[RMDB]
RNA sequence: GGGAACGACUCGAGUAGAGUCGAAAACUUUUGAUGGUAGUAUCUAGGACUACCAUGGUUGCAACGGGUAACGGGCAAUCAGGGUUCGAUUCCGGAGAGGGAGCCUGAGAAACGGCUACCACAUCUAACGACGUUAUGAGUUCGCUCAUAACGUCGUAAAAGAAACAACAACAACAAC
Reactivity to 2A3 in 0.01 (KOAc 150mM, MgCl2 10mM, bicine 150mM(pH8.5), 24C), signal-to-noise 4, nucleotides 027 to 126: c010u030u100u150u170g050a030u030g040g020u020a060g030u010a050u090c080u060a120g030g060a000c000u000a010c000c000a010u000g000g000u010u000g010c080a290a240c110g020g010g090u170a190a040c020g000g010g000c000a010a020u020c000a020g050g000g020u060u100c050g030a140u120u020c020c010g030g020a060g020a040g020g040g000a010g000c010c000u070g000a050g010a030a130a020c060g000g000c000u060a120c000c010a060c000a030u000c010u050a070
Reactivity to DMS in 0.01 (KOAc 150mM, MgCl2 10mM, bicine 150mM(pH8.5), 24C), signal-to-noise 2, nucleotides 027 to 126: c060u000u010u020u010g010a000u030g000g000u040a020g030u030a030u000c080u000a140g040g000a020c000u000a000c040c000a010u000g000g000u020u000g000c000a080a130c090g030g010g030u030a040a180c050g000g010g000c020a070a050u000c030a080g000g020g000u000u000c030g000a040u030u050c000c010g000g010a090g000a130g000g000g000a050g020c000c000u040g000a120g000a050a100a220c140g000g000c000u000a100c000c000a050c190a070u000c060u030a130
The record gives the reactivity of an RNA of 177 nucleotides to 2A3 and DMS. 2A3 adducts were read by reverse transcription with SuperScript II with manganese. The RNA was probed in 150 mM KOAc, 10 mM MgCl2 and 150 mM bicine (pH 8.5) at 24 C. Values cover nucleotides 27 to 126. It was measured as part of the RMDB libraries RFM100 and RFMREP.